An RNA of 207 nucleotides, treated with DMS and 2A3 and read out base by base.
RNA sequence: GGGAACGACUCGAGUAGAGUCGAAAAGAAAGAGACAAGUGGACAUGCAGUGACUGCACCUUUGUUUCUGAGGUGCCUGGAUGGAGGCUCAAAUAGAAGAUGGUGUCAGAUAUAUUGUGUUAAAAUUUUACCAUUAAAGUGUAUUAUAACAUGAAAAUACUAAAUGACUGUUCGCAGUCAUUUAGUAAAAAGAAACAACAACAACAAC
Reactivity to DMS in 0.01 (KOAc 150mM, MgCl2 10mM, bicine 150mM(pH8.5), 24C), signal-to-noise 3, nucleotides 027 to 156: g000a170a100a080g010a080g010a060c030a070a100g000u000g030g020a070c040a070u010g000c020a100g030u000g000a110c090u000g010c000a050c010c000u000u010u010g020u000u010u000c080u000g020a050g000g050u010g030c010c070u010g010g030a090u000g000g000a070g020g010c030u000c050a040a040a130u010a080g000a060a080g020a080u000g020g020u010g000u000c020a120g020a130u010a050u000a090u010u010g010u000g000u000u000a010a060a100a220u000u000u010u000a120c010c020a170u000u010a070a080a190g020u010g000u010a050u000u000a120u000a040a050c000a040u000g000a080a080a040a170
Reactivity to 2A3 in 0.01 (KOAc 150mM, MgCl2 10mM, bicine 150mM(pH8.5), 24C), signal-to-noise 4, nucleotides 027 to 156: g040a010a010a010g030a010g000a010c020a040a030g040u050g070g030a030c030a070u080g000c020a030g020u060g120a080c050u070g000c010a010c000c010u020u040u130g030u000u040u020c010u010g010a010g030g000u020g000c010c070u050g040g010a030u020g030g030a020g030g000c000u010c050a050a070a010u130a020g020a050a010g020a020u040g010g020u030g050u050c050a030g100a040u060a010u020a050u140u070g010u000g030u030u040a100a130a060a100u100u180u070u130a030c010c010a020u050u180a130a030a070g030u040g020u040a040u160u090a080u100a040a040c010a010u080g080a030a040a050a080

2A3 adducts were read by reverse transcription with SuperScript II with manganese. For DMS, 5,852 sequencing reads were counted. 2A3 is a SHAPE reagent: it acylates the 2'-hydroxyl of flexible nucleotides of all four kinds. The 2A3 profile rests on 2,851 reads. For DMS the reverse transcriptase was MarathonRT.